[RMDB]
RNA sequence: GGGAACGACUCGAGUAGAGUCGAAAAGCACCGACCCUCCCCACCCUCAGGGAGCCCUGGGCCGGUGCCACGGCUGGUGCUGUCCGACCUGCACCUGCUGACGCAGAGCCAGGUGCGCGUGUCCUGGGCUCUGUUUCUACUUCGGUAGAAACAGAGCAAAAGAAACAACAACAACAAC
Reactivity to DMS in 0.01 (KOAc 150mM, MgCl2 10mM, bicine 150mM(pH8.5), 24C), signal-to-noise 2, nucleotides 027 to 126: g000c060a060c010c030g020a210c030c020c010u000c020c020c030c050a230c040c030c020u000c060a160g010g000g010a070g030c060c010c030u000g000g030g010c010c000g020g000u000g020c020c090a040c160g010g000c020u010g000g010u000g020c010u000g010u000c060c070g010a080c050c050u000g000c030a030c030c000u020g000c050u000g000a120c100g020c080a110g020a100g010c080c010a080g000g010u000g010c020g010c070g000u010g000u000c010c000u010g010g000